[RMDB]
About this RNA:
The data come from the RNA Mapping Database (RMDB), library OK2TST. The record gives the reactivity of an RNA of 177 nucleotides to DMS. Values cover nucleotides 27 to 126. The RNA was probed in 150 mM KOAc, 10 mM MgCl2 and 150 mM bicine (pH 8.5) at 24 C.

RNA sequence: GGGAACGACUCGAGUAGAGUCGAAAAGGAUGGCAUGUCUGCGCCGCUGCGCUUUGGGGAGCUUGCUCGGGUGCUAGGCCAUGAGGGACCACAUCCUGCAGUGCAGGUGCGCGAGGCUGUACUUGGCGUGCCAACGGGGAUUCGUCCCCGUUGGCACAAAAGAAACAACAACAACAAC
Reactivity to DMS in 0.01 (KOAc 150mM, MgCl2 10mM, bicine 150mM(pH8.5), 24C), signal-to-noise 1, nucleotides 027 to 126: g000g000a040u010g010g000c020a070u010g010u020c030u010g050c040g010c020c070g010c060u000g000c010g020c020u000u010u010g000g000g020g010a070g060c130u000u000g010c010u020c050g010g000g010u000g000c200u020a110g010g000c040c030a070u000g000a070g000g020g000a110c090c110a080c110a130u020c000c000u000g020c120a060g000u000g000c010a040g010g000u020g000c030g020c050g000a070g000g010c010u000g020u000a070c030u000u000g000g000c140